An RNA of 177 nucleotides, treated with 2A3 and DMS and read out base by base.
RNA sequence: GGGAACGACUCGAGUAGAGUCGAAAAUCGGCAGUUGAUCGCUGCCGGACACACGGUGAGCGGUAUAGCCCAGCACCCGCACGAUGCUCUGGACCCCCGCGUCGACUAUGUUUGCGCGUCGUUGCGCAGAACGGAUAACGUUCGCGUUAUCCGUUCUAAAAGAAACAACAACAACAAC
Reactivity to 2A3 in 0.01 (KOAc 150mM, MgCl2 10mM, bicine 150mM(pH8.5), 24C), signal-to-noise 3, nucleotides 027 to 126: u070c020g010g000c030a010g030u170u090g170a120u140c030g020c000u020g000c010c020g000g010a020c030a000c010a010c020g040g040u080g090a040g040c040g000g070u090a080u140a170g030c000c010c010a010g010c030a050c000c040c000g010c000a010c020g050a050u030g020c020u030c040u100g120g070a130c000c000c000c010c000g000c010g010u040c010g000a030c020u060a060u240g140u030u100u090g000c010g000c000g020u040c020g070u070u100g000c020g000c010
Reactivity to DMS in 0.01 (KOAc 150mM, MgCl2 10mM, bicine 150mM(pH8.5), 24C), signal-to-noise 6, nucleotides 027 to 126: u010c030g000g010c010a000g010u000u000g010a100u010c210g010c010u000g010c000c000g000g000a080c140a090c130a070c070g010g010u000g000a080g020c010g000g010u000a090u000a150g020c030c010c030a080g010c080a070c060c020c040g010c070a120c080g010a070u000g000c040u010c040u000g010g000a220c050c030c030c030c040g020c070g010u000c020g010a050c060u000a060u000g000u000u010u000g010c050g020c030g020u000c160g010u000u010g020c020g020c070

Description:
For 2A3, 3,991 sequencing reads were counted. It was measured as part of the RMDB library OK2TST.